[RMDB]
RNA sequence: GGGAACGACUCGAGUAGAGUCGAAAAGUAGCGCGGCCGCAGGCCGAUCAUAGGUACCACAUAGUACUCGGUACGGAUCAGUACGCGCACGUAGUCAGCUGAGCUGCGCUGGCGCUGUGGCCGGCCACGGAGACCAUGUUUUCGAACAUGGUCUCCGAAAAGAAACAACAACAACAAC
Reactivity to 2A3 in 0.01 (KOAc 150mM, MgCl2 10mM, bicine 150mM(pH8.5), 24C), signal-to-noise 1, nucleotides 027 to 126: g050u050a030g000c150g000c020g220g000c000c010g000c020a020g060g000c050c000g000a000u030c000a060u080a090g280g000u010a000c020c000a040c010a090u210a030g160u140a210c070u080c210g010g020u010a010c000g050g000a000u050c010a010g090u110a020c080g000c010g000c020a000c060g030u040a030g150u110c120a100g030c100u190g090a040g000c080u010g010c060g000c000u000g040g000c210g000c060u030g000u000g000g000c010c010g010g000c000c000a000
Reactivity to DMS in 0.01 (KOAc 150mM, MgCl2 10mM, bicine 150mM(pH8.5), 24C), signal-to-noise 3, nucleotides 027 to 126: g000u000a070g010c000g030c010g010g000c010c000g020c010a030g020g010c020c030g020a000u000c000a140u010a180g030g010u000a010c000c010a100c220a120u010a190g030u020a110c240u000c120g000g010u000a030c010g010g000a020u000c000a140g000u000a060c170g010c040g000c050a030c080g010u000a060g000u010c130a140g010c070u010g010a140g010c110u000g010c020g020c010u000g000g020c000g030c010u000g020u000g000g010c010c010g030g010c000c060a070
The record gives the reactivity of an RNA of 177 nucleotides to 2A3 and DMS. For DMS, 2,405 sequencing reads were counted. The 2A3 profile rests on 1,831 reads. High DMS reactivity at an A or C suggests that its Watson-Crick edge is free. The reactions ran in a buffer of 150 mM KOAc, 10 mM MgCl2 and 150 mM bicine (pH 8.5), at 24 C.